[RMDB]
RNA sequence: GGGAACGACUCGAGUAGAGUCGAAAAAUGGGCCCUACCGGGUUACUGACCUUAGCCAAACUCCGAAUGCCGGUAAGUGAGAGCGCGGCAGUGAGACUGUGGGGGAUAAGCUCCAUGGUCGAGAGGGGACACAUAGUUGGUUCGCCAACUAUGUGUCAAAAGAAACAACAACAACAAC
Reactivity to DMS in 0.01 (KOAc 150mM, MgCl2 10mM, bicine 150mM(pH8.5), 24C), signal-to-noise 2, nucleotides 027 to 126: a210u010g010g010g000c020c020c000u010a080c200c060g040g000g010u000u000a050c140u000g000a220c040c030u010u000a100g020c050c050a070a180a110c040u020c000c010g010a200a110u000g020c020c020g050g000u000a040a080g030u000g010a120g000a130g020c030g010c250g000g020c000a130g010u010g010a140g010a020c020u000g000u000g000g010g050g020g020a130u010a090a150g020c010u000c000c010a010u000g000g020u010c010g000a110g020a090g000g000g020
Reactivity to 2A3 in 0.01 (KOAc 150mM, MgCl2 10mM, bicine 150mM(pH8.5), 24C), signal-to-noise 1, nucleotides 027 to 126: a000u040g050g010g010c060c000c000u040a030c020c040g000g040g050u060u030a060c020u080g140a120c000c000u000u110a040g000c000c000a120a090a050c000u000c010c000g090a100a060u120g070c070c040g080g000u070a100a090g060u030g100a150g000a000g060c040g000c000g030g000c000a010g010u010g040a100g010a010c000u000g000u000g030g020g010g020g030a090u100a270a070g090c010u000c000c000a010u030g020g020u010c010g010a040g000a010g020g000g040